[RMDB]
Chemical mapping of a 207-nucleotide RNA with 2A3.
For 2A3 the reverse transcriptase was SuperScript II with manganese.
Conditions: 150 mM KOAc, 10 mM MgCl2 and 150 mM bicine (pH 8.5), 24 C.

RNA sequence: GGGAACGACUCGAGUAGAGUCGAAAAACGAGUCCGUACGCGGACUCGAAGGGCCCCAGAAGACCAUGGGGCCCAAACCUACCACUCAUUAGAUGCAUGGAAAUCACUAGGUGAUACGUCACCUAGAACACGCUUUUAAGCUUCGGCUUAAAAGCAACUUUCUCAGCUAGUUCGCUAGCUGAGAAAGAAAAGAAACAACAACAACAAC
Reactivity to 2A3 in 0.01 (KOAc 150mM, MgCl2 10mM, bicine 150mM(pH8.5), 24C), signal-to-noise 2, nucleotides 027 to 156: a010c020g000a000g000u000c000c000g000u100a010c220g000c030g050g000a000c010u000c000g000a000a000g010g000g000c000c000c000c000a070g090a260a050g020a160c060c090a170u050g000g010g030g020c000c000c010a000a000a000c000c000u010a020c030c010a020c030u140c060a140u060u170a080g060a100u120g120c100a040u120g140g080a120a090a180u230c120a120c050u010a000g000g000u000g000a000u000a120c290g060u000c010a000c010c010u000a010g030a000a000c060a020c120g000c030u000u000u000u000a000a000g000c000u000u080c200g090g000c000u000u000a000a000a000a000g000c000a000a000